[RMDB]
RNA sequence: GGGAACGACUCGAGUAGAGUCGAAAAGGGCCUUGGAAGUUGGAUGCAGCUUGGGAUGGACUCAGCGAGGUACAGCUUUUGGCCGUACCUCCCGGAGAGAGGGCCAGAAACAUUCAGACCCUGCCUGUCUGUUACUGACUUUCGAGUCAGUAACAGAAAAAGAAACAACAACAACAAC
Reactivity to 2A3 in 0.01 (KOAc 150mM, MgCl2 10mM, bicine 150mM(pH8.5), 24C), signal-to-noise 5, nucleotides 027 to 126: g040g000g010c020c050u090u040g090g030a110a070g060u110u080g030g040a070u080g020c060a060g040c080u060u070g020g000g070a120u110g060g020a070c020u020c030a000g020c030g050a010g000g000u000a000c000a010g000c000u100u160u160u300g050g000c000c000g000u010a010c000c000u010c020c030c010g050g010a060g000a000g020a030g030g060g040c020c010a050g080a040a050a000c030a010u050u080c010a010g030a120c000c010c000u020g050c010c010u030g040
Reactivity to DMS in 0.01 (KOAc 150mM, MgCl2 10mM, bicine 150mM(pH8.5), 24C), signal-to-noise 4, nucleotides 027 to 126: g000g000g030c030c030u030u020g010g020a050a070g010u000u000g000g000a120u000g020c070a070g000c090u000u000g000g010g010a160u010g000g000a220c010u010c030a010g010c300g000a010g000g010u000a010c010a040g000c000u000u050u030u040g000g010c010c020g010u010a010c010c010u000c020c030c070g000g000a040g000a070g010a160g000g010g000c040c020a060g020a120a140a210c090a060u010u000c050a040g000a100c010c000c020u000g010c000c020u000g020
An RNA of 177 nucleotides, treated with 2A3 and DMS and read out base by base. Reactivities are given for positions 27 through 126. Reactivities are rounded to 0.1 and cut off at 0 and 3. For 2A3 the reverse transcriptase was SuperScript II with manganese. For DMS, 7,320 sequencing reads were counted.